Record summary
Conditions: 150 mM KOAc, 10 mM MgCl2 and 150 mM bicine (pH 8.5), 24 C. Structure probing data (2A3) for a 177-nucleotide construct.

RNA sequence: GGGAACGACUCGAGUAGAGUCGAAAAUCUUAUGACUGUGUUUCUAACUUACUUUGUGUGAGGACAUCGGUAGAUGGGCAGUUCGGCUGGGGCGGCACGGGCUUGAAAUGGUAUCAAGCCCGCCCAAACACACACCACUCUUCGGAGUGGUGUGUGUAAAAGAAACAACAACAACAAC
Reactivity to 2A3 in 0.01 (KOAc 150mM, MgCl2 10mM, bicine 150mM(pH8.5), 24C), signal-to-noise 1, nucleotides 027 to 126: u000c050u060u090a140u150g130a000c100u020g050u070g000u000u000u000c000u030a040a200c000u000u000a010c000u190u300u240g010u060g000u010g030a000g150g000a000c000a000u160c140g070g110u130a120g050a050u010g030g060g030c000a000g000u070u100c010g000g000c010u020g020g000g000g000c000g000g000c000a000c020g000g000g050c000u000u000g010a000a130a150u200g160g000u000a120u060c000a000a000g010c000c000c000g010c000c000c000a000a000
Values are in units of 0.01, from 0 to 300, in steps of 10. Values cover nucleotides 27 to 126. The data come from the RNA Mapping Database (RMDB), library RFM100.